[RMDB]
RNA sequence: GGGAACGACUCGAGUAGAGUCGAAAACGUUGCCGUGUCCCCCUUGAUGUCUCUUGAGGACAUGGUGGUGGUGGCCUGUAGGUACUUGAUGGUGCCCGUGCGGCAGGCAUCACCGCCUCGUCGUACGGAUCCAUUAUGGUUUCGACCAUAAUGGAUCAAAAGAAACAACAACAACAAC
Reactivity to DMS in 0.01 (KOAc 150mM, MgCl2 10mM, bicine 150mM(pH8.5), 24C), signal-to-noise 4, nucleotides 027 to 126: c110g010u010u000g000c030c020g020u010g010u000c010c010c020c030c050u010u000g010a040u010g030u000c020u000c010u000u020g010a190g020g000a010c010a090u010g010g040u000g000g010u000g020g000u000g000g000c010c000u000g000u000a120g000g010u000a010c020u000u000g030a170u050g000g010u000g000c000c000c270g040u000g010c210g010g000c010a010g010g020c000a020u010c050a040c070c050g000c000c000u010c110g010u010c020g030u010a090c160g000
Reactivity to 2A3 in 0.01 (KOAc 150mM, MgCl2 10mM, bicine 150mM(pH8.5), 24C), signal-to-noise 4, nucleotides 027 to 126: c050g080u100u140g080c040c020g030u050g050u060c010c010c000c000c010u040u090g060a060u110g140u020c040u020c010u110u130g050a090g110g000a010c000a030u050g000g010u010g010g010u020g010g030u030g040g270c000c000u050g060u110a050g000g040u030a020c020u110u280g140a180u300g100g010u020g010c000c000c020g130u140g050c070g060g000c000a000g000g000c000a020u050c020a010c010c040g000c000c000u010c080g020u000c010g010u040a050c060g040
This 177-nucleotide RNA was probed chemically with DMS and 2A3.
The 2A3 profile rests on 8,355 reads.
The RNA was probed in 150 mM KOAc, 10 mM MgCl2 and 150 mM bicine (pH 8.5) at 24 C.
For 2A3 the reverse transcriptase was SuperScript II with manganese.